[RMDB]
RNA sequence: GGGAACGACUCGAGUAGAGUCGAAAAGAUAUGGAGCGUAUAGCAACAGCUGCAGGGUCGGAAACGACCCGCAGACAUGCUAUGAUCUCCUAAGUCAAACGCUAACGCAGUUCGCUGCGUUAGCGAAGUAUCAGCUAAUGUUCGCAUUAGCUGAUACAAAAGAAACAACAACAACAAC
Reactivity to DMS in 0.01 (KOAc 150mM, MgCl2 10mM, bicine 150mM(pH8.5), 24C), signal-to-noise 6, nucleotides 027 to 126: g010a010u000a110u010g000g000a010g010c270g000u010a020u000a000g010c000a090a120c240a140g010c010u000g000c010a170g030g000g010u000c000g010g000a020a020a060c000g010a000c000c000c000g000c010a010g010a030c090a080u010g000c000u000a000u000g000a060u000c010u000c000c000u000a010a100g010u000c010a140a080a230c020g020c000u000a000a010c000g010c000a010g000u010u010c240g030c010u000g000c000g000u000u000a000g010c000g000a000a030
Reactivity to 2A3 in 0.01 (KOAc 150mM, MgCl2 10mM, bicine 150mM(pH8.5), 24C), signal-to-noise 5, nucleotides 027 to 126: g000a000u020a010u070g000g000a000g000c040g040u210a000u020a020g010c090a080a210c130a300g050c020u020g000c120a300g010g010g000u000c000g000g000a020a010a000c000g000a000c000c010c000g000c000a010g000a020c040a080u290g000c000u000a000u000g030a050u010c000u000c000c000u000a030a010g000u000c010a140a020a070c030g010c000u010a010a000c000g000c000a020g000u060u120c200g110c180u000g000c000g000u000u000a000g000c000g000a000a010